Structure probing data (DMS and 2A3) for a 207-nucleotide construct. Conditions: 150 mM KOAc, 10 mM MgCl2 and 150 mM bicine (pH 8.5), 24 C. The data come from the RNA Mapping Database (RMDB), library RNAMAK. 2A3 adducts were read by reverse transcription with SuperScript II with manganese.
RNA sequence: GGGAACGACUCGAGUAGAGUCGAAAAACGCUGGGAUCGAUCUCUAGCGUGGAGCGCAGAUAUAUAAUAGCCUACUGAAGCGCGCACGGUAGGCUUCUAUAUGUAGCUCUCGGGUCGAUCCUGUGCUGAAGCGCGCACGGCAACCGAAAGGUGCGAACAACUCAAUAUUGUUCGCAAUAUUGAGUUGAAAAGAAACAACAACAACAAC
Reactivity to DMS in 0.01 (KOAc 150mM, MgCl2 10mM, bicine 150mM(pH8.5), 24C), signal-to-noise 2, nucleotides 027 to 156: a050c050g040c070u000g000g030g000a030u000c000g000a020u010c010u010c080u010a170g120c120g010u000g020g030a050g030c000g030c080a090g010a090u000a090u000a100u000a090a120u020a100g070c020c010u000a040c000u000g000a070a050g020c020g050c030g000c020a300c040g020g040u000a010g010g030c020u000u000c060u020a090u010a060u000g010u010a090g000c000u000c010u000c030g020g020g000u000c010g020a030u000c000c010u010g010u010g000c020u010g010a070a060g000c070g040c020g030c020a280c060g020g030c020a080a100c010c010g000a140a130a230g020g010u000g020c010g020a060a170
Reactivity to 2A3 in 0.01 (KOAc 150mM, MgCl2 10mM, bicine 150mM(pH8.5), 24C), signal-to-noise 5, nucleotides 027 to 156: a000c020g010c000u010g000g010g000a000u010c010g010a000u010c100u040c130u270a120g090c070g110u190g010g010a020g000c010g020c030a010g160a080u030a010u020a000u060a240a300u220a240g000c000c000u000a000c000u020g050a230a060g010c000g010c000g000c010a010c010g010g000u000a000g000g000c000u070u030c050u010a030u000a010u040g020u020a120g000c000u000c010u000c030g000g000g000u000c000g000a000u000c000c000u000g000u000g000c000u010g020a080a020g010c000g000c000g000c000a000c000g020g000c010a000a030c000c000g040a050a050a010g010g000u020g010c010g030a080a040